[RMDB]
Structure probing data (DMS and 2A3) for a 177-nucleotide construct. The DMS profile rests on 22,916 reads. 2A3 adducts were read by reverse transcription with SuperScript II with manganese. The 2A3 profile rests on 28,107 reads. The reactions ran in a buffer of 150 mM KOAc, 10 mM MgCl2 and 150 mM bicine (pH 8.5), at 24 C.

RNA sequence: GGGAACGACUCGAGUAGAGUCGAAAAGAUAUGGAGUACUUCUGUGUGGAGAGGGCGUUCGGAAACGAACGCACCUCGUUGAAACACAGAGAGUACUCCUAAGUCAAAACCAGUGUUCGCACUGGAACAAACAGUUAAAGUUCGCUUUAACUGUUUGAAAAGAAACAACAACAACAAC
Reactivity to DMS in 0.01 (KOAc 150mM, MgCl2 10mM, bicine 150mM(pH8.5), 24C), signal-to-noise 9, nucleotides 027 to 126: g000a040u000a300u010g000g000a020g010u000a000c000u000u000c000u000g010u000g010u000g000g010a070g010a010g010g010g010c000g010u010u010c000g010g000a130a130a220c010g010a020a010c000g010c000a030c000c000u000c000g000u010u010g000a220a150a020c000a000c000a010g000a030g000a020g020u000a010c000u000c000c000u000a010a090g000u010c030a120a090a130a200c010c000a010g010u000g010u000u010c260g020c010a020c000u000g000g000a120a170
Reactivity to 2A3 in 0.01 (KOAc 150mM, MgCl2 10mM, bicine 150mM(pH8.5), 24C), signal-to-noise 5, nucleotides 027 to 126: g020a010u070a060u190g000g000a010g000u000a010c010u000u020c010u010g000u000g010u010g020g040a030g000a000g010g030g010c000g010u010u000c010g040g020a090a070a030c010g010a000a020c020g000c030a200c000c000u000c000g000u050u010g000a000a000a000c000a000c000a000g010a010g020a020g010u000a000c000u000c000c000u000a010a000g010u000c030a010a010a080a150c010c010a010g010u010g040u060u090c230g040c100a000c000u010g020g020a010a030

DMS adducts were read by reverse transcription with MarathonRT.